Structure probing data (DMS and 2A3) for a 177-nucleotide construct. For 2A3 the reverse transcriptase was SuperScript II with manganese. For 2A3, 1,757 sequencing reads were counted. DMS adducts were read by reverse transcription with MarathonRT. Values cover nucleotides 27 to 126.

RNA sequence: GGGAACGACUCGAGUAGAGUCGAAAAAAAAUGGAUGCUCCAAGAUCCAGACAGCUACAUCCAAUUCAUAGCACAACCUGGUGGUGAACAAACCUGCAGUGCUGUCUUAGACAUAGCAACCUUAAGAACCAUUACUGUUGUUCGCAACAGUAAUGGUAAAAGAAACAACAACAACAAC
Reactivity to DMS in 0.01 (KOAc 150mM, MgCl2 10mM, bicine 150mM(pH8.5), 24C), signal-to-noise 3, nucleotides 027 to 126: a050a070a100a080u010g000g000a080u000g010c080u020c190c060a090a130g010a050u000c050c040a090g010a090c150a040g000c030u000a020c110a090u010c060c030a050a080u000u000c070a050u010a050g010c030a040c050a040a070c150c050u000g020g010u010g000g010u010g010a080a090c150a030a050a090c050c020u000g010c130a130g000u000g010c010u000g000u010c020u000u000a070g020a060c080a080u000a020g010c050a020a100c050c030u000u010a100a100g000a140
Reactivity to 2A3 in 0.01 (KOAc 150mM, MgCl2 10mM, bicine 150mM(pH8.5), 24C), signal-to-noise 2, nucleotides 027 to 126: a010a010a000a030u020g000g010a030u080g010c050u080c090c010a060a030g070a120u010c040c000a010g060a030c030a000g010c000u060a040c010a090u020c020c020a040a030u050u100c050a080u110a110g040c010a020c010a070a050c020c010u030g030g040u080g030g020u040g150a110a030c030a030a130a050c000c010u070g020c050a030g020u010g050c000u000g000u000c010u010u070a040g030a020c040a030u080a020g040c010a030a100c010c000u130u130a140a050g050a110